The record gives the reactivity of an RNA of 177 nucleotides to 2A3 and DMS. The reactions ran in a buffer of 150 mM KOAc, 10 mM MgCl2 and 150 mM bicine (pH 8.5), at 24 C. Values cover nucleotides 27 to 126. Source: RMDB libraries RFM100 and RFMREP, as collected in RNAgym.
RNA sequence: GGGAACGACUCGAGUAGAGUCGAAAAGUUGCAAUGUGGGAAGUUCGUGGUAAUGACUGGAGAGCUAAUUUGAAUGAGAUAAAUACUUAUCAAAAAGCCAUAGAAGAAUCCCCGUUUUUUGAUAAAAGAUAGAAUGUAGUUUCGACUACAUUCUAUCAAAAGAAACAACAACAACAAC
Reactivity to 2A3 in 0.01 (KOAc 150mM, MgCl2 10mM, bicine 150mM(pH8.5), 24C), signal-to-noise 4, nucleotides 027 to 126: g070u060u040g010c030a030a060u080g040u180g000g000g000a000a070g070u040u020c020g010u000g030g000u070a100a090u120g040a050c060u020g010g040a040g010a000g070c030u080a100a240u080u050u090g160a170a100u100g010a050g020a050u110a140a090a030u240a140c040u030u050a030u070c000a000a030a080a030a000g010c010c010a040u090a180g030a020a000g010a040a060u060c000c010c000c020g000u010u060u010u000u010u020g070a090u060a050a070a020a030
Reactivity to DMS in 0.01 (KOAc 150mM, MgCl2 10mM, bicine 150mM(pH8.5), 24C), signal-to-noise 4, nucleotides 027 to 126: g000u000u000g040c120a070a040u020g020u020g030g000g020a070a120g000u000u010c060g010u010g000g010u000a090a070u000g020a090c070u000g010g030a140g010a050g000c040u000a080a110u000u010u000g010a090a070u010g000a030g000a070u010a050a090a090u020a060c040u000u000a040u000c000a010a020a080a120a180g000c000c040a030u000a090g010a110a130g000a130a140u000c010c010c010c130g000u000u000u000u010u020u000g000a110u020a050a050a100a110